[RMDB]
RNA sequence: GGGAACGACUCGAGUAGAGUCGAAAAGAAGUAACCAUCCAUCAAGCCAGCUAGGUUCGCACGCUGUGAGUUCUCAUCUUUACCCAGUGCAUUUGGCACGAUAGAGAAGGUAUAUGAGAUACCGUCACAUCGUUUUACGAUUCGUCGUAAAACGAUGAAAAGAAACAACAACAACAAC
Reactivity to 2A3 in 0.01 (KOAc 150mM, MgCl2 10mM, bicine 150mM(pH8.5), 24C), signal-to-noise 3, nucleotides 027 to 126: g090a040a000g040u070a020a040c010c000a040u000c020c010a040u050c040a060a030g060c000c000a020g010c030u080a040g000g110u090u070c090g020c020a020c050g050c040u050g020u040g070a040g030u080u000c020u000c000a060u020c070u070u050u060a050c010c010c020a020g000u010g000c020a060u130u150u220g160g000c020a010c040g050a090u130a090g120a000g040a110a040g000g000u020a050u020a030u110g090a060g010a070u040a040c040c010g100u090c020a020
Reactivity to DMS in 0.01 (KOAc 150mM, MgCl2 10mM, bicine 150mM(pH8.5), 24C), signal-to-noise 6, nucleotides 027 to 126: g000a070a100g000u000a060a080c040c020a090u010c030c050a100u010c080a090a120g010c030c030a050g020c060u000a100g030g010u000u020c070g030c080a100c100g000c050u000g000u000g000a090g010u000u000c010u000c030a060u000c070u010u010u000a080c010c010c110a130g030u000g010c010a270u000u010u010g020g010c000a020c030g020a100u010a080g000a130g020a070a090g020g000u000a010u000a110u000g010a070g010a040u000a030c020c030g000u010c080a150